[RMDB]
Conditions: 150 mM KOAc, 10 mM MgCl2 and 150 mM bicine (pH 8.5), 24 C. Structure probing data (2A3 and DMS) for a 207-nucleotide construct. High 2A3 reactivity points to a flexible backbone, as in loops and unpaired stretches. Values cover nucleotides 27 to 156.
RNA sequence: GGGAACGACUCGAGUAGAGUCGAAAAAAUAGAACGAACAGCACAGCUGGCACCAUCAGGUCCGCCUUGGUCAGGGUCACCUUGACCACGUACUUGGCAAUCACAAAGUACAGCAGGCUGAGCACGACGGCGUGGAUCAGAACAGACAUGAAGCUCGGACAAGUUUUACAUUCGUGUAAAACUUGUCAAAAGAAACAACAACAACAAC
Reactivity to 2A3 in 0.01 (KOAc 150mM, MgCl2 10mM, bicine 150mM(pH8.5), 24C), signal-to-noise 5, nucleotides 027 to 156: a000a010u210a070g080a090a020c050g030a050a020c020a040g020c010a010c020a160g020c030u030g080g000c010a060c050c020a060u080c080a040g010g010u000c010c020g010c020c010u020u060g010g000u000c000a010g000g010g070u250c080a230c120c000u030u030g000a010c020c000a000c020g000u010a010c000u020u020g030g000c050a060a130u110c030a080c060a130a100a010g060u110a080c030a060g050c010a000g010g070c000u010g010a010g030c030a010c030g100a020c040g020g020c030g040u110g040g000a010u020c020a000g030a090a030c030a000g040a020c020a030u110g060a090a020g020c040u070c060g020
Reactivity to DMS in 0.01 (KOAc 150mM, MgCl2 10mM, bicine 150mM(pH8.5), 24C), signal-to-noise 2, nucleotides 027 to 156: a070a120u000a100g010a020a090c030g000a100a080c040a150g030c020a100c090a100g060c000u000g010g030c000a110c030c020a120u020c050a100g020g010u010c030c020g030c030c030u000u000g000g060u010c050a010g010g000g000u010c160a120c020c010u000u000g020a060c000c000a080c040g010u000a030c030u000u000g010g010c020a100a100u020c100a200c080a080a000a070g000u000a050c030a080g040c080a130g050g000c000u010g000a090g030c040a040c040g010a080c050g000g010c020g070u000g000g000a110u000c030a050g020a080a140c020a050g010a050c010a070u000g020a110a120g010c030u000c070g030
It was measured as part of the RMDB library OK3TST.